Structure probing data (DMS and 2A3) for a 177-nucleotide construct. The DMS profile rests on 2,088 reads. The data come from the RNA Mapping Database (RMDB), library TTRDES.
RNA sequence: GGGAACGACUCGAGUAGAGUCGAAAAGUCUAGAUAUGGACCACCUACCCACCGUAGGAGCGUCCGAAGAACUAAUUCGGAAACGAAUUAGGGAGGACGCCCUACGAGGGUGGUCCUAAGUCAAUAAUCAUAGCAGCUAGUUCGCUAGCUGCUAUGAAAAAGAAACAACAACAACAAC
Reactivity to DMS in 0.01 (KOAc 150mM, MgCl2 10mM, bicine 150mM(pH8.5), 24C), signal-to-noise 3, nucleotides 027 to 126: g000u010c180u000a120g000a130u010a290u020g010g000a000c000c010a040c000c000u000a120c030c010c010a300c140c010g020u000a000g020g010a130g030c010g010u000c000c020g000a060a140g000a210a300c000u000a000a010u000u000c020g030g000a150a080a280c010g000a030a020u000u000a000g000g000g010a080g010g010a010c000g000c010c040c000u000a000c010g000a040g000g020g010u000g000g020u000c020c000u010a010a050g000u000c080a140a100u010a120a160
Reactivity to 2A3 in 0.01 (KOAc 150mM, MgCl2 10mM, bicine 150mM(pH8.5), 24C), signal-to-noise 1, nucleotides 027 to 126: g110u070c100u180a150g060a260u220a260u290g010g000a000c000c030a000c000c000u300a300c070c030c030a020c000c000g000u000a040g000g140a300g070c050g010u050c050c010g000a130a000g010a030a000c000u010a020a000u000u030c000g000g000a090a020a000c000g000a020a020u020u010a000g000g060g030a040g000g010a000c010g000c000c000c000u010a000c000g000a000g000g000g010u000g070g000u000c000c000u000a010a000g010u000c060a000a230u250a100a060